[RMDB]
RNA sequence: GGGAACGACUCGAGUAGAGUCGAAAAUCGAGGGCCUUCCUUCGUCGGUGAUCCCGCCUCUCCUCGUCGGUGAAUCCUCCCCCGGGGGGCCUCUUCCUAGGUCCGGAGUCUAUCUCCAUCUGGUCCGGCACAAGUAUAAGUUCGCUUAUACUUGUGCAAAAGAAACAACAACAACAAC
Reactivity to DMS in 0.01 (KOAc 150mM, MgCl2 10mM, bicine 150mM(pH8.5), 24C), signal-to-noise 2, nucleotides 027 to 126: u010c080g010a070g010g000g020c080c060u000u010c040c010u010u000c070g000u010c080g000g020u000g000a100u000c050c010c010g000c060c030u000c060u010c030c020u010c050g000u010c060g020g000u000g000a120a160u000c040c020u020c000c020c020c030c040g000g000g030g030g000g000c040c010u010c050u000u000c020c010u000a040g000g010u000c030c020g040g000a040g000u000c120u010a120u000c030u000c010c030a110u020c080u000g010g010u010c030c040g020